[RMDB]
RNA sequence: GGGAACGACUCGAGUAGAGUCGAAAAGCGGAUGAAUUGCCGAGAAGCCUGGCUCGAAAUCGUCGACGCAUCGACGACGGUCCUGCCAUGAGACCGUAACGAGGACAUGUCGCCUCGAAUGGCGUCGUAUAACAUGAGUGGUUCGCCACUCAUGUAAGGUGAAUCAUCUCUUCGGAGAUGAUUCACCAAAAGAAACAACAACAACAAC
Reactivity to 2A3 in 0.01 (KOAc 150mM, MgCl2 10mM, bicine 150mM(pH8.5), 24C), signal-to-noise 2, nucleotides 027 to 156: g040c020g070g000a030u050g130a130a130u130u140g000c020c000g020a060g040a140a000g010c000c090u080g050g000c040u000c040g010a120a080a010u000c040g020u030c010g000a040c090g020c110a070u110c010g000a010c030g020a040c000g000g020u000c010c030u100g000c020c000a020u040g020a010g000a070c010c010g030u080a010a000c060g040a000g010g020a030c040a100u150g020u150c040g000c000c000u020c020g020a000a000u020g000g040c000g030u070c040g030u040a220u010a300a000c000a020u000g000a010g010u000g050g000u080u100c180g060c000c000a000c000u000c030a000u010g000u000a030a030